Chemical mapping of a 177-nucleotide RNA with DMS and 2A3. The reactions ran in a buffer of 150 mM KOAc, 10 mM MgCl2 and 150 mM bicine (pH 8.5), at 24 C.

[RMDB]
RNA sequence: GGGAACGACUCGAGUAGAGUCGAAAAAGAACUAGCGAUUGUAAAAGGCUGUUUCCGCUAAGAUAUGGAAUUAGCGCAAAUAGGUCCGAAUUCCUUGAUAACAUUUCGGACAACCGCGCUAAAACAAUAAAGCAUUAGGAUUCGUCCUAAUGCUUUAAAAAGAAACAACAACAACAAC
Reactivity to DMS in 0.01 (KOAc 150mM, MgCl2 10mM, bicine 150mM(pH8.5), 24C), signal-to-noise 6, nucleotides 027 to 126: a070g010a080a140c100u010a040g030c030g010a090u000u020g020u010a050a070a110a090g010g010c030u000g000u000u000u000c060c010g010c100u000a050a080g000a120u010a090u010g010g000a090a140u000u000a000g000c000g020c060a040a070a090u010a100g000g000u000c000c000g000a020a010u000u000c100c110u000u000g010a110u000a080a120c200a070u000u000u010c010g000g000a020c010a050a050c250c120g010c000g010c020u000a000a010a040a110c080a050a070
Reactivity to 2A3 in 0.01 (KOAc 150mM, MgCl2 10mM, bicine 150mM(pH8.5), 24C), signal-to-noise 2, nucleotides 027 to 126: a000g060a030a000c020u040a010g030c020g110a120u040u270g110u240a000a080a080a090g060g000c020u000g000u000u020u000c020c000g020c080u070a080a040g030a120u100a100u260g100g020a080a110u040u000a000g000c010g000c000a030a080a070u180a130g130g000u000c000c000g000a010a000u080u080c040c010u090u160g070a010u030a100a080c050a060u050u010u010c000g000g040a000c000a010a020c040c050g000c000g000c000u010a000a020a000a020c010a000a090